[RMDB]
RNA sequence: GGGAACGACUCGAGUAGAGUCGAAAAUCCUGCUAGCCGUGUGGCUCUUAAAGAGCCCCACACCCCUCCGCCCUGCGUGCUCCUCCGACCCCCGCCACCCCUCCCCUCUCCUCCGGAUCUAGCCCCCGAAAAGGUUUAAUUUCGAUUAAACCUUUUCAAAAGAAACAACAACAACAAC
Reactivity to 2A3 in 0.01 (KOAc 150mM, MgCl2 10mM, bicine 150mM(pH8.5), 24C), signal-to-noise 3, nucleotides 027 to 126: u020c010c000u010g040c080u080a050g070c060c100g020u020g020u030g030g000c000u000c010u100u230a230a210a040g010a000g000c010c000c010c000a000c000a010c000c000c010c010u000c010c030g010c000c000c000u020g010c000g020u040g000c020u010c000c000u010c000c020g020a040c000c010c000c000c000g010c000c010a010c010c000c010c000u010c000c010c010c000u010c000u010c010c010u010c010c010g020g000a000u010c000u000a020g020c010c000c000c040c000
Reactivity to DMS in 0.01 (KOAc 150mM, MgCl2 10mM, bicine 150mM(pH8.5), 24C), signal-to-noise 3, nucleotides 027 to 126: u000c010c000u000g010c090u020a060g020c090c080g060u000g010u010g000g000c020u000c020u010u060a060a140a120g000a010g010c020c010c040c030a010c010a190c110c030c030c030u000c050c020g010c010c020c010u020g010c100g030u000g030c050u010c040c010u000c030c030g010a090c100c050c030c050c090g000c060c040a060c060c030c030c030u010c020c020c020c030u000c010u010c020c000u000c030c030g010g000a070u020c050u000a130g000c020c010c010c060c180
Chemical mapping of a 177-nucleotide RNA with 2A3 and DMS. The data come from the RNA Mapping Database (RMDB), libraries RFM100 and RFMREP. 2A3 adducts were read by reverse transcription with SuperScript II with manganese. Reactivities are given for positions 27 through 126.